[RMDB]
Structure probing data (2A3) for a 207-nucleotide construct.

RNA sequence: GGGAACGACUCGAGUAGAGUCGAAAAAUAAAACCUGUAUACUGGACACAGACUCACUAGAAAAGAAGCGGACGCCACCGUUAACCACUAGUCAUCCCUUUGAAGGGCCUUCUGCCUCGGCGUCUUCCUCCAGUGUCCCACUAACACGUCACCAGCAGCAUUGUUAAGCAUUCGUGCUUAACAAUGCAAAAGAAACAACAACAACAAC
Reactivity to 2A3 in 0.01 (KOAc 150mM, MgCl2 10mM, bicine 150mM(pH8.5), 24C), signal-to-noise 2, nucleotides 027 to 156: a000u080a000a060a000a020c020c010u010g050u040a180u040a130c030u040g040g010a010c030a010c040a120g040a070c030u040c040a050c020u060a060g120a080a200a050a000g100a200a020g050c020g060g000a020c050g050c030c020a040c020c020g010u060u040a070a150c060c010a070c080u080a010g030u070c090a170u210c020c000c000u120u120u040g150a120a080g010g010g000c020c030u050u040c070u080g030c010c020u060c020g000g000c000g010u000c010u010u030c010c000u040c030c000a040g000u030g050u100c010c030c000a090c070u170a240a020c040a030c140g100u090c030a060c120c010a060g150c000a000

For 2A3, 743 sequencing reads were counted.
Reactivities are given for positions 27 through 156.
The RNA was probed in 150 mM KOAc, 10 mM MgCl2 and 150 mM bicine (pH 8.5) at 24 C.